[RMDB]
An RNA of 177 nucleotides, treated with 2A3 and read out base by base. 2A3 adducts were read by reverse transcription with SuperScript II with manganese. The reactions ran in a buffer of 150 mM KOAc, 10 mM MgCl2 and 150 mM bicine (pH 8.5), at 24 C. Source: RMDB library RFM100, as collected in RNAgym.
RNA sequence: GGGAACGACUCGAGUAGAGUCGAAAAACGACCGAUUACGAUCGGUCGAUGGGGGGCAGCCAGGACUGGAUGGGGUAGCUGGGAAGGGCCAGAAGGGUGGCCUCACUCAGCCCUGUGUUCCCUAGAAGCAAGUCGCAUACUUCGGUAUGCGACUUGCAAAAGAAACAACAACAACAAC
Reactivity to 2A3 in 0.01 (KOAc 150mM, MgCl2 10mM, bicine 150mM(pH8.5), 24C), signal-to-noise 1, nucleotides 027 to 126: a000c000g000a000c020c000g000a010u080u020a050c210g050a020u020c000g020g000u010c020g000a000u000g020g000g010g000g020g000c010a010g080c100c020a000g030g020a020c000u000g030g020a050u000g010g060g020g010u020a130g040c040u050g020g020g050a220a080g070g080g050c000c000a030g030a050a060g120g010g090u080g070g000c000c000u000c000a000c000u030c020a000g000c020c000c000u030g000u000g020u010u000c020c000c000u030a040g020a040a030